RNA sequence: GGGAACGACUCGAGUAGAGUCGAAAAGAUAUGGAUGACGUUGCUUUUGACGUUCAUUGGUCGGAAACGACCACCUCGGGAACGAUAAGCAACCUCAUCCUAAGUCAAACCCACGUUCGCGUGGGAACCCUCAUAUAUUGUUCGCAAUAUAUGAGGGAAAAGAAACAACAACAACAAC
Reactivity to DMS in 0.01 (KOAc 150mM, MgCl2 10mM, bicine 150mM(pH8.5), 24C), signal-to-noise 9, nucleotides 027 to 126: g000a040u000a300u010g000g000a020u000g010a020c290g010u000u000g010c010u000u000u010u010g020a230c110g010u010u000c010a180u010u000g010g020u000c000g000g000a080a100a170c010g010a010c000c000a020c300c140u000c210g010g020g010a010a020c010g010a150u000a010a010g000c020a010a010c010c070u000c000a010u000c000c000u000a010a080g010u010c020a120a140a240c000c000c000a020c010g010u000u010c210g020c020g030u000g000g000g010a030a070
Reactivity to 2A3 in 0.01 (KOAc 150mM, MgCl2 10mM, bicine 150mM(pH8.5), 24C), signal-to-noise 7, nucleotides 027 to 126: g040a020u070a020u140g010g000a000u000g000a000c010g010u000u010g010c020u150u150u180u300g300a160c050g000u010u000c020a050u080u120g000g000u000c010g000g010a060a040a050c010g000a010c010c010a030c030c100u250c220g270g100g010a030a020c010g070a150u060a280a020g000c000a000a000c000c000u000c000a000u000c000c000u000a080a000g020u000c030a090a060a300c000c010c010a000c000g030u100u110c300g010c010g160u010g010g000g000a040a050
Structure probing data (DMS and 2A3) for a 177-nucleotide construct. For DMS the reverse transcriptase was MarathonRT. The reactions ran in a buffer of 150 mM KOAc, 10 mM MgCl2 and 150 mM bicine (pH 8.5), at 24 C. Reactivities are rounded to 0.1 and cut off at 0 and 3. The 2A3 profile rests on 85,327 reads.